[RMDB]
RNA sequence: GGGAACGACUCGAGUAGAGUCGAAAAGGGCAAUACCGGGCCCGAUACCGGAAUUAGUAGUUUUCUACGAGAGGCCCAAUCUGCGGCCCAAUGCAGUGUAGGUCGAAGCGAGGACCGAGACUCGAUAAUUACGUCGAUAGAUGGACGAUUCCAUCAAAUGCAUUACUGAUUUCGAUCAGUAAUGCAUAAAAGAAACAACAACAACAAC
Reactivity to DMS in 0.01 (KOAc 150mM, MgCl2 10mM, bicine 150mM(pH8.5), 24C), signal-to-noise 2, nucleotides 027 to 156: g020g020g040c030a110a130u000a100c030c040g000g010g010c040c000c060g000a080u000a040c040c010g000g020a140a130u000u010a070g010u000a040g020u000u000u000u000c030u000a050c010g000a170g030a260g000g000c000c020c010a110a200u010c030u000g000c020g000g020c040c060c070a030a110u010g000c040a110g010u000g030u000a120g020g070u000c010g020a090a080g010c030g000a300g030g010a090c020c040g000a120g030a070c030u000c000g010a090u010a050a120u000u000a110c110g070u010c000g020a090u000a100g000a050u000g000g020a090c080g000a300u000u000c000c000a010u020c000a060a120
Reactivity to 2A3 in 0.01 (KOAc 150mM, MgCl2 10mM, bicine 150mM(pH8.5), 24C), signal-to-noise 4, nucleotides 027 to 156: g020g000g020c020a050a020u010a110c020c010g000g030g000c010c010c090g040a020u030a040c000c010g030g050a160a080u100u060a090g040u000a010g010u060u060u110u090c030u030a050c030g030a020g010a060g100g010c000c000c020a010a080u070c030u060g010c020g050g020c030c050c010a030a040u100g010c030a010g020u040g010u210a020g040g000u020c020g020a040a010g050c020g010a030g000g050a040c020c040g030a050g030a030c020u010c000g010a010u060a160a050u130u090a030c050g040u020c010g050a080u050a180g010a010u010g000g020a020c110g090a120u150u030c000c010a020u010c000a110a030